Source information
An RNA of 207 nucleotides, treated with 2A3 and DMS and read out base by base.
[RMDB]
RNA sequence: GGGAACGACUCGAGUAGAGUCGAAAAGUGUAGAGAGGAUAAAACGGCAACACAGCUCACAAGAACAGACUUUCCAGCUGCUGAAGUUAUGGAAACAUCAAAACAAAGACCAAGAUAUAGUCAAGAAGAUCAUCCAAGGUAUGAUAAUCUAAAAUAACGAUUAUGGGAUGUUCGCAUCCCAUAAUCGAAAAGAAACAACAACAACAAC
Reactivity to 2A3 in 0.01 (KOAc 150mM, MgCl2 10mM, bicine 150mM(pH8.5), 24C), signal-to-noise 4, nucleotides 027 to 156: g020u040g000u030a040g010a000g000a000g050g000a020u070a080a120a000a020c050g020g000c010a050a030c040a020c010a060g010c030u030c040a080c030a060a050g020a120a040c030a070g090a070c020u040u030u010c010c010a010g000c010u060g000c050u090g060a060a010g030u130u120a060u120g020g020a020a000a020c030a040u120c050a020a110a080a050c060a070a090a000g030a000c030c030a020a000g050a010u110a010u040a070g050u060c030a010a010g070a040a000g020a060u050c000a000u030c050c080a070a010g050g020u080a020u050g070a030u060a060a030u060c060u200a040a150a020a060u300a110a060
Reactivity to DMS in 0.01 (KOAc 150mM, MgCl2 10mM, bicine 150mM(pH8.5), 24C), signal-to-noise 2, nucleotides 027 to 156: g030u000g020u010a160g020a140g040a110g020g050a120u010a000a060a120a120c080g000g000c000a080a070c070a080c030a110g060c040u040c020a020c080a070a080g020a080a110c020a120g010a050c020u000u010u000c010c010a120g000c030u000g010c070u010g000a110a060g020u010u010a080u000g010g000a120a030a140c040a140u010c030a050a060a070a160c060a060a080a090g010a110c030c040a020a110g010a090u000a050u000a040g010u000c070a070a080g020a020a080g020a070u000c020a040u000c010c020a070a100g010g010u000a020u010g010a030u010a010a050u010c060u010a080a040a020a110u040a060a250
The 2A3 profile rests on 1,958 reads.
Conditions: 150 mM KOAc, 10 mM MgCl2 and 150 mM bicine (pH 8.5), 24 C.